[RMDB]
RNA sequence: GGGAACGACUCGAGUAGAGUCGAAAAGGGUUUGGAUUACAUCAAUAGUAACAUGAGCAGAAGUAAACAGAACAAGAAGUACUGCGGUUAUUCAAGUUCAAAGUUGACACUAUCGCAAUAAAGGGAAACGUAUAUUUUCGUUCGCGAAAAUAUACGUAAAAGAAACAACAACAACAAC
Reactivity to DMS in 0.01 (KOAc 150mM, MgCl2 10mM, bicine 150mM(pH8.5), 24C), signal-to-noise 4, nucleotides 027 to 126: g000g000g000u000u000u020g010g000a140u010u000a060c080a080u000c080a060a110u010a050g010u000a050a070c120a060u000g010a110g010c030a050g000a060a100g020u010a060a060a040c050a090g010a060a040c040a060a200g000a050a050g000u020a040c040u010g020c060g030g020u000u000a110u000u000c010a030a240g000u000u000c080a060a070a090g020u000u000g010a060c120a040c070u000a060u000c060g010c050a020a040u010a030a060a090g010g000g000a050a100
Reactivity to 2A3 in 0.01 (KOAc 150mM, MgCl2 10mM, bicine 150mM(pH8.5), 24C), signal-to-noise 3, nucleotides 027 to 126: g020g010g010u060u080u060g070g030a070u070u090a020c020a070u120c050a040a120u070a100g050u050a050a030c030a080u090g030a010g050c010a030g010a080a010g050u080a030a040a060c040a050g060a030a010c010a040a020g050a050a010g010u040a010c000u000g050c030g090g010u030u040a050u040u030c020a010a000g030u000u020c000a120a090a040g010u000u040g040a000c010a010c080u120a110u100c000g000c060a040a060u130a170a060a010g000g020g060a060a200